An RNA of 177 nucleotides, treated with 2A3 and DMS and read out base by base.
The 2A3 profile rests on 4,116 reads.
RNA sequence: GGGAACGACUCGAGUAGAGUCGAAAAUUUAUAACAACACUAUUGAUAUGGUUUGACUGUAUCCGCACCCAAAUCUCAUCUUGAAUUGUAGUUCCCGUAAUCCCCUUGUGUCAUGGGAGGGACCCAGCAUCUCGUCUUAAUUCGUUAAGACGAGAUGAAAAGAAACAACAACAACAAC
Reactivity to 2A3 in 0.01 (KOAc 150mM, MgCl2 10mM, bicine 150mM(pH8.5), 24C), signal-to-noise 3, nucleotides 027 to 126: u020u040u030a140u070a090a030c030a050a010c010a020c070u080a070u150u160g030a040u030a030u170g030g060u030u100u140g080a040c010u010g000u070a060u040c060c040g010c020a040c020c010c000a020a050a040u010c040u000c010a070u000c020u030u080g070a110a080u130u060g040u050a050g020u010u010c000c000c000g020u010a060a110u100c030c000c010c050u020u040g100u010g020u070c030a060u050g000g020g000a070g010g010g000a020c000c000c010a000g000
Reactivity to DMS in 0.01 (KOAc 150mM, MgCl2 10mM, bicine 150mM(pH8.5), 24C), signal-to-noise 5, nucleotides 027 to 126: u010u010u010a090u010a120a120c060a050a060c070a070c080u000a110u000u010g010a090u010a060u010g010g010u010u010u010g010a080c050u000g010u000a050u000c080c130g000c070a070c050c040c030a030a040a080u020c030u010c060a080u000c050u000u000g000a080a100u000u010g000u000a090g000u000u000c010c000c010g000u010a070a160u020c040c010c000c080u000u010g010u000g020u000c070a060u000g010g000g010a050g010g020g000a140c040c020c040a100g010